Chemical mapping of a 177-nucleotide RNA with DMS and 2A3. High 2A3 reactivity points to a flexible backbone, as in loops and unpaired stretches. 2A3 adducts were read by reverse transcription with SuperScript II with manganese. Reactivities are given for positions 27 through 126. Conditions: 150 mM KOAc, 10 mM MgCl2 and 150 mM bicine (pH 8.5), 24 C. The data come from the RNA Mapping Database (RMDB), library OK2TST. For DMS the reverse transcriptase was MarathonRT.
RNA sequence: GGGAACGACUCGAGUAGAGUCGAAAAAUGAUAAUAGCAAUCAAGAUCCUUACUAGUGCAUCAUUUGACCAGGCUAUGCAGUAUUAUCUCCAAUUUGGAUCUGCAUCUUACAGAUUGGGAAACUAUAUAUUGCCCACAUAUUCGUAUGUGGGCAAUAAAAAGAAACAACAACAACAAC
Reactivity to DMS in 0.01 (KOAc 150mM, MgCl2 10mM, bicine 150mM(pH8.5), 24C), signal-to-noise 3, nucleotides 027 to 126: a090u000g010a020u000a090a070u000a090g040c070a090a130u010c050a110a110g000a080u000c040c020u000u000a090c110u000a050g010u000g010c050a060u000c030a120u010u000u010g020a150c070c050a070g000g030c090u000a050u000g020c050a050g000u000a050u010u010a080u010c100u000c020c010a030a030u010u000u000g000g010a050u010c060u010g000c110a060u010c070u030u010a160c070a030g000a050u000u000g010g010g010a150a100a130c140u000a040u000a180
Reactivity to 2A3 in 0.01 (KOAc 150mM, MgCl2 10mM, bicine 150mM(pH8.5), 24C), signal-to-noise 1, nucleotides 027 to 126: a010u030g050a050u030a120a080u010a180g000c020a030a050u070c020a090a070g000a090u050c030c000u010u040a050c050u040a040g140u010g070c000a010u000c010a010u010u050u100g050a030c030c000a040g010g030c030u100a030u110g000c030a000g050u130a090u130u110a080u040c060u000c040c030a040a070u070u000u070g020g000a030u030c040u010g110c030a030u060c000u030u060a090c050a040g060a120u050u040g030g010g030a060a060a000c050u040a010u110a020